[RMDB]
RNA sequence: GGGAACGACUCGAGUAGAGUCGAAAAAUCAGGAACCCACUUUCGCCAGGAUUACCAGCGCGUCUGCCAGUCCGCUGGCCCGUGCCCCGCCGACUAGGCAGCUCUUCUCGUCGCCGCGGGCCGCGGCCUCUUCGCAGAAGAGGAGCCACUUCACGCGCACCUAGCUUUAUUUCGAUAAAGCUAGGUGAAAAGAAACAACAACAACAAC
Reactivity to 2A3 in 0.01 (KOAc 150mM, MgCl2 10mM, bicine 150mM(pH8.5), 24C), signal-to-noise 1, nucleotides 027 to 156: a010u190c060a070g070g020a000a040c000c050c020a030c110u070u170u090c040g030c040c020a040g060g050a160u110u150a130c070c050a050g010c040g010c020g010u020c030u060g030c020c020a020g050u040c010c050g050c130u090g010g000c000c030c010g040u040g010c000c000c060c040g030c000c000g000a010c040u030a080g050g130c010a060g090c040u020c050u150u020c000u050c050g060u020c000g010c060c050g050c070g010g060g020c050c020g040c040g050g000c020c000u030c030u080u040c020g070c170a050g010a050a000g010a000g030g000a000g030c020c030a080c040u080u100c020a020c060g010c000g010